[RMDB]
RNA sequence: GGGAACGACUCGAGUAGAGUCGAAAACAUUAAGUCGUUCGCGACUUAAUGAAAAAGCGUACUACGCCUGUGUGACUUGGACCUCGUCCCAAAUAGGACGAGCUAGUCACCAGGAACUACGUAUCGCAAAAAAACUUUUUGCUUCGGCAAAAAGUAAGGAUAAAUAUGACUUCGGUCAUAUUUAUCCAAAAGAAACAACAACAACAAC
Reactivity to 2A3 in 0.01 (KOAc 150mM, MgCl2 10mM, bicine 150mM(pH8.5), 24C), signal-to-noise 5, nucleotides 027 to 156: c000a000u000u000a000a000g000u000c000g020u070u150c260g000c010g140a010c000u000u010a000a010u000g080a120a020a010a020a010g010c010g010u030a030c030u020a010c050g080c020c000u170g060u060g000u000g210a000c010u020u110g050g090a130c020c020u000c000g000u010c000c000c020a200a300a230u300a130g000g010a000c000g000a010g010c010u010a000g000u000c000a000c000c000a000g000g020a000a020c040u070a010c030g020u020a030u300c150g000c000a070a060a000a000a080a020a070c000u020u000u010u000u000g000c000u020u060c260g100g000c000a010a000a000a000a000g020u040a030a120
Reactivity to DMS in 0.01 (KOAc 150mM, MgCl2 10mM, bicine 150mM(pH8.5), 24C), signal-to-noise 1, nucleotides 027 to 156: c010a020u000u010a010a000g030u000c000g040u000u000c300g040c000g010a020c000u000u010a000a010u020g010a030a080a110a110a160g020c000g000u000a030c110u000a150c160g000c010c000u030g000u030g040u000g020a010c000u010u020g080g010a100c290c050u030c000g000u000c010c010c000a070a180a200u010a050g020g010a010c000g010a020g020c000u000a020g000u000c010a010c000c000a010g000g000a020a040c070u010a070c060g000u000a060u000c020g020c030a000a000a030a080a170a120a030c010u000u000u000u000u000g020c000u000u020c300g070g000c010a020a030a010a010a010g010u000a040a100